[RMDB]
Chemical mapping of a 207-nucleotide RNA with DMS and 2A3. High DMS reactivity at an A or C suggests that its Watson-Crick edge is free. The reactions ran in a buffer of 150 mM KOAc, 10 mM MgCl2 and 150 mM bicine (pH 8.5), at 24 C.
RNA sequence: GGGAACGACUCGAGUAGAGUCGAAAACGCACUCGCAGCGUAAUAACCUGCGCUGAGCCCUUCUCCCCCAGCUUGCCUGUGUCCUAGGGAAUUGGAAGGUCAUCCUUCACAGGAUCGUGUGGAAGUCAUUACUCGUGAGUGUUCGCACUCACGAGAACUUUUAUUCGCACUUCGGUGCGAAUAAAAGAAAAGAAACAACAACAACAAC
Reactivity to DMS in 0.01 (KOAc 150mM, MgCl2 10mM, bicine 150mM(pH8.5), 24C), signal-to-noise 1, nucleotides 027 to 156: c050g000c060a080c050u020c010g000c000a050g030c040g050u000a050a140u020a090a080c160c060u000g010c020g010c050u040g000a030g030c030c010c020u000u000c040u020c050c000c000c020c060a160g020c080u000u000g010c040c030u020g070u010g000u000c050c050u000a110g020g020g010a030a180u000u000g020g010a050a070g000g000u000c040a080u010c020c020u000u000c010a150c070a090g020g010a030u010c080g020u010g010u010g010g010a100a240g010u000c010a080u000u000a150c020u000c000g040u000g000a050g040u000g020u000u000c200g030c020a000c000u000c010a030c010g010a000g000a020a030
Reactivity to 2A3 in 0.01 (KOAc 150mM, MgCl2 10mM, bicine 150mM(pH8.5), 24C), signal-to-noise 1, nucleotides 027 to 156: c020g030c020a030c020u060c050g020c000a000g000c000g000u010a040a070u070a080a100c030c040u020g000c000g000c070u050g020a050g030c020c020c000u080u060c110u080c000c000c000c000c000a000g020c020u030u060g080c010c000u050g000u000g020u010c000c020u030a010g060g010g050a050a040u180u030g030g010a020a000g040g000u030c020a020u060c000c000u040u030c020a030c000a010g090g000a070u090c070g010u020g000u030g120g040a030a040g040u030c010a070u040u200a090c000u000c000g000u010g000a000g010u000g000u030u060c090g080c030a000c000u000c000a000c000g000a000g000a000a000
For DMS the reverse transcriptase was MarathonRT. Values cover nucleotides 27 to 156.